[RMDB]
This 177-nucleotide RNA was probed chemically with DMS and 2A3. The DMS profile rests on 7,006 reads. For DMS the reverse transcriptase was MarathonRT. The reactions ran in a buffer of 150 mM KOAc, 10 mM MgCl2 and 150 mM bicine (pH 8.5), at 24 C.
RNA sequence: GGGAACGACUCGAGUAGAGUCGAAAAGAUAUGGAAUACGUCGAUAAGAGCAGUGUCGGAAACGACACGCUCUUUUGACGACGUUCCUAAGUCAAAAGAUGCCGUCAACUUCGGUUGACGGCAUCAACUUUAAGACUAUGUUCGCAUAGUCUUAAAGAAAAGAAACAACAACAACAAC
Reactivity to DMS in 0.01 (KOAc 150mM, MgCl2 10mM, bicine 150mM(pH8.5), 24C), signal-to-noise 3, nucleotides 027 to 126: g000a050u000a300u010g000g000a020a010u000a070c010g000u000c000g010a040u010a020a010g000a010g010c010a120g050u000g010u000c000g000g000a090a070a200c000g010a010c000a000c000g010c000u000c000u000u000u000u000g010a060c020g010a070c150g010u000u000c000c010u010a070a180g000u010c030a090a070a110a120g000a010u000g010c000c000g000u000c000a010a020c000u000u010c170g020g000u000u000g000a010c020g000g000c000a000u000c000a020a070
Reactivity to 2A3 in 0.01 (KOAc 150mM, MgCl2 10mM, bicine 150mM(pH8.5), 24C), signal-to-noise 2, nucleotides 027 to 126: g010a000u080a050u200g000g010a030a040u060a140c010g010u000c030g030a060u100a280a010g000a010g040c300a200g030u010g000u020c000g020g030a040a060a110c010g000a000c000a000c000g010c030u010c000u010u000u000u000g020a010c010g000a050c090g000u010u000c010c000u010a060a040g070u070c050a000a030a020a190g010a010u010g000c000c040g000u000c000a010a000c010u070u160c300g070g010u010u020g000a000c000g000g030c000a000u000c000a000a000